[RMDB]
RNA sequence: GGGAACGACUCGAGUAGAGUCGAAAAAUCCAUAGUGGACAUUUCGGUUGCUUCCACAUCUUGGGUAUUGUGCGUAAUGCUGCACAAUGAACCUGCCAGUAGCUCUUAGAGAUUCUACUUUGAAUUGCUACAGUCAGAGAUUCGUCUCUGACUGUAGAAAAGAAACAACAACAACAAC
Reactivity to 2A3 in 0.01 (KOAc 150mM, MgCl2 10mM, bicine 150mM(pH8.5), 24C), signal-to-noise 4, nucleotides 027 to 126: a010u050c020c010a050u090a040g040u020g020g000a010c020a070u080u110u080c240g180g030u100u130g010c090u080u010c010c010a040c020a090u060c090u090u130g020g000g010u060a010u020u020g010u020g000c010g070u100a140a190u260g100c170u160g000c010a000c000a030a000u030g010a050a050c000c000u010g040c030c000a010g010u030a040g000c010u000c030u100u140a030g010a010g000a120u110u010c000u020a080c030u060u060u150g160a200a130u140u180g050
Reactivity to DMS in 0.01 (KOAc 150mM, MgCl2 10mM, bicine 150mM(pH8.5), 24C), signal-to-noise 4, nucleotides 027 to 126: a060u000c010c010a060u000a070g030u010g010g020a060c110a040u000u000u010c090g020g010u010u000g000c090u010u000c040c070a060c070a070u010c110u000u000g010g010g020u000a030u000u000g010u000g010c010g010u000a110a090u000g020c200u010g020c000a010c010a020a020u000g010a040a090c040c010u000g020c090c080a080g020u000a050g010c260u000c040u000u000a110g010a180g000a070u000u000c020u010a010c030u000u010u010g010a060a070u000u000g010